[RMDB]
RNA sequence: GGGAACGACUCGAGUAGAGUCGAAAAGAUAUGGAUUAUUGGGAGCUCCUUAUCGGAAACGAUAAGUCUCGAGCGACGAUCAAUACGGUCCUAAGUCAAAACGGUACCCUCUUCGGAGGGUACCGAACGAAUCAAGUAUCUUCGGAUACUUGAUUCGAAAAGAAACAACAACAACAAC
Reactivity to 2A3 in 0.01 (KOAc 150mM, MgCl2 10mM, bicine 150mM(pH8.5), 24C), signal-to-noise 3, nucleotides 027 to 126: g000a000u020a000u040g000g000a020u050u040a010u040u080g020g000g000a010g000c000u000c020c000u000u000a010u000c000g000g000a000a010a000c000g010a000u000a010a020g120u020c140u180c300g000a000g000c010g260a300c000g000a000u000c000a010a000u070a100c210g120g000u000c010c000u000a000a000g010u000c000a040a010a060a110c020g000g000u000a000c000c010c010u000c000u030u060c220g190g010a000g020g000g010u010a000c000c000g000a000a010
Reactivity to DMS in 0.01 (KOAc 150mM, MgCl2 10mM, bicine 150mM(pH8.5), 24C), signal-to-noise 5, nucleotides 027 to 126: g000a010u000a000u010g000g000a020u000u000a020u010u000g000g000g010a010g030c000u000c010c010u000u000a000u000c000g010g010a010a010a010c000g000a010u000a000a010g000u020c260u010c280g000a010g030c000g010a040c210g000a050u000c000a000a010u020a030c300g020g010u000c000c000u000a000a040g000u000c020a070a030a110a230c030g010g000u000a000c000c000c000u000c000u000u010c210g010g010a010g000g000g010u000a000c020c000g020a000a040